RNA sequence: GGGAACGACUCGAGUAGAGUCGAAAAUGGUAACGGUCAGGUGUGAAGCCCUCCCGACAAUGUAGCCCGAACCGCAAGGUUGAAGCUGAAUCCGUGAGGAGGAAGCAACUUCACCAGUGUCAGGUGAUAGGGAACUAGGCUUGAGGGUAUGGUGAGCCCUAAGCUAUGACUUCGGUCAUAGCUUAGGAAAAGAAACAACAACAACAAC
Reactivity to 2A3 in 0.01 (KOAc 150mM, MgCl2 10mM, bicine 150mM(pH8.5), 24C), signal-to-noise 4, nucleotides 027 to 156: u130g010g010u080a110a010c030g020g050u030c040a020g000g050u020g030u050g080a080a040g000c000c000c000u010c000c020c010g050a050c060a070a090u130g010u080a050g020c000c000c000g010a000a000c020c000g000c060a060a060g020g000u020u000g020a000a000g000c010u020g010a010a010u000c000c000g040u070g060a060g010g010a010g020g030a010a010g000c000a000a000c000u000u010c000a010c010c000a060g050u080g210u300c110a040g000g000u000g010a010u000a010g000g000g010a000a030c000u010a010g020g000c030u040u080g010a010g020g030g020u090a080u080g050g000u050g010a010g030c000
Reactivity to DMS in 0.01 (KOAc 150mM, MgCl2 10mM, bicine 150mM(pH8.5), 24C), signal-to-noise 2, nucleotides 027 to 156: u000g040g020u000a060a060c070g000g030u000c010a070g010g000u010g000u090g020a120a180g010c000c010c020u000c010c020c030g000a090c060a090a110u000g030u000a200g000c000c010c010g000a060a040c020c000g000c190a100a140g000g030u000u010g000a030a050g020c000u000g000a300a220u000c020c010g000u020g020a260g010g010a060g010g010a290a140g000c020a010a000c000u000u010c000a050c000c010a160g040u000g020u020c090a100g010g030u010g050a070u000a100g010g010g010a070a030c040u010a200g000g000c040u000u000g000a120g040g030g000u000a020u000g030g010u000g000a110g020c180